[RMDB]
RNA sequence: GGGAACGACUCGAGUAGAGUCGAAAAAGGGAAUGAUGCCUUUCACACCAAGCAGAGGCCACACCCAUAAAAAAGUGUCGAAGUGAUCAGGCAGUGACACCACCUUCCAAUGACAGCACAUGUAAUUGUAAUUAAUUUCUCAGAGCAAUUAUGCAGAUCAUGAUUACUCGUUCGCGAGUAAUCAUGAAAAAGAAACAACAACAACAAC
Reactivity to DMS in 0.01 (KOAc 150mM, MgCl2 10mM, bicine 150mM(pH8.5), 24C), signal-to-noise 2, nucleotides 027 to 156: a060g000g010g000a120a110u000g020a110u000g030c030c000u000u010u000c040a110c050a170c000c040a050a200g010c060a080g010a080g040g010c000c060a050c050a110c010c010c020a140u010a000a070a070a050a090a070g010u000g010u000c030g000a100a120g030u000g000a070u000c040a090g030g000c030a070g000u000g000a180c070a040c020c030a060c040c030u020u010c030c020a080a110u020g000a110c060a110g000c020a110c020a100u000g010u000a020a040u000u000g010u000a050a300u000u000a090a110u000u000u000c080u000c020a110g000a300g010c020a000a050u010u000a060u000g030c070a080g010a090
Reactivity to 2A3 in 0.01 (KOAc 150mM, MgCl2 10mM, bicine 150mM(pH8.5), 24C), signal-to-noise 4, nucleotides 027 to 156: a000g080g000g010a100a190u100g060a060u090g050c000c000u000u020u040c070a120c040a060c070c030a070a020g010c040a010g060a030g020g010c030c000a020c010a010c010c000c010a030u160a020a130a020a030a000a010g060u050g040u060c050g040a130a020g030u040g070a110u080c040a020g010g070c030a010g030u020g090a020c020a030c050c030a030c000c000u050u050c030c030a070a070u130g030a060c020a030g010c030a040c030a070u110g020u070a040a020u060u010g020u030a030a080u120u100a030a110u040u190u030c070u010c030a050g040a000g040c010a020a010u050u050a040u130g060c020a000g010a110